The data come from the RNA Mapping Database (RMDB), library OK3TST.
The record gives the reactivity of an RNA of 207 nucleotides to 2A3 and DMS.
[RMDB]
RNA sequence: GGGAACGACUCGAGUAGAGUCGAAAAUGGAAGUGGAGUGACCAGUUAGGAGGCUAUUGCAGUAUUCCAAAAGAGGAGAUUAUCUUUUCCUUAGCAUGGUUUUCAUAAGAGGUUAUUUUAUAGUAUACACAGUGACAGUCCUGGAAGUAUGACAAGAUAAAUACCAUAGCUUCGGCUAUGGUAUUUAAAAAGAAACAACAACAACAAC
Reactivity to 2A3 in 0.01 (KOAc 150mM, MgCl2 10mM, bicine 150mM(pH8.5), 24C), signal-to-noise 1, nucleotides 027 to 156: u020g010g000a000a010g010u000g040g030a100g050u080g000a100c080c030a040g000u020u070a040g100g000a000g020g020c010u120a090u130u130g020c000a020g000u090a160u130u060c000c000a070a040a000a000g040a010g000g030a010g030a010u110u080a060u150c090u050u100u090u000c000c000u000u000a010g020c000a050u010g050g000u020u000u010u260c110a050u140a110a030g010a020g150g020u000u140a100u090u130u000u070a130u010a030g000u000a080u020a090c060a000c020a040g000u000g050a030c060a090g120u000c000c030u000g100g000a020a030g030u090a090u060g090a010c000a020a000g220a190
Reactivity to DMS in 0.01 (KOAc 150mM, MgCl2 10mM, bicine 150mM(pH8.5), 24C), signal-to-noise 1, nucleotides 027 to 156: u000g000g020a020a140g050u000g000g000a070g060u020g000a040c000c040a120g010u000u000a090g010g000a080g000g030c020u000a060u000u010g000c060a130g030u000a140u010u000c050c030a020a030a070a130g030a070g010g010a060g020a150u010u000a050u010c050u000u000u000u000c000c020u000u010a100g020c040a110u020g000g010u010u040u000u000c020a070u000a090a110g010a180g000g000u000u000a070u000u000u000u020a140u000a200g020u010a050u010a150c060a060c080a070g040u000g000a060c040a110g020u000c010c030u010g010g010a040a080g020u000a060u000g010a070c070a070a030g030a220
Overview
High DMS reactivity at an A or C suggests that its Watson-Crick edge is free. The 2A3 profile rests on 411 reads.